[RMDB]
RNA sequence: GGGAACGACUCGAGUAGAGUCGAAAAUUAAUCGGGCUUGUUUGCGCCGCGUAUGCGCUUGCUUGCUUGCUUGCGGCCGAACGGGCUUGUUCCCUUUUGGCGCUUGCUUGCGGGCGGGCAAAAUGAACUCACUAUAACUCUUCGGAGUUAUAGUGAGAAAAGAAACAACAACAACAAC
Reactivity to DMS in 0.01 (KOAc 150mM, MgCl2 10mM, bicine 150mM(pH8.5), 24C), signal-to-noise 3, nucleotides 027 to 126: u010u010a100a090u010c040g010g000g020c020u000u000g010u000u010u010g000c070g010c020c020g020c120g030u010a040u000g010c300g000c030u000u000g010c040u000u000g000c020u000u000g010c000u000u000g010c000g020g030c000c000g000a010a020c050g000g010g000c070u000u010g010u010u000c000c000c000u000u000u000u000g000g010c040g000c000u000u000g000c000u000u000g010c010g000g000g010c010g000g000g020c010a030a050a060a080u000g010a110a230
Reactivity to 2A3 in 0.01 (KOAc 150mM, MgCl2 10mM, bicine 150mM(pH8.5), 24C), signal-to-noise 2, nucleotides 027 to 126: u130u070a050a090u110c040g000g000g050c040u120u140g080u300u180u120g070c120g050c010c010g140c020g050u130a040u140g080c060g000c030u000u050g030c010u020u020g000c010u020u010g000c020u000u030g010c060g250g010c000c000g010a000a010c020g000g000g000c000u020u120g030u110u180c000c000c000u000u020u000u000g010g000c000g000c010u020u040g000c000u000u020g010c040g000g020g000c000g000g000g000c000a040a020a000a040u120g020a030a020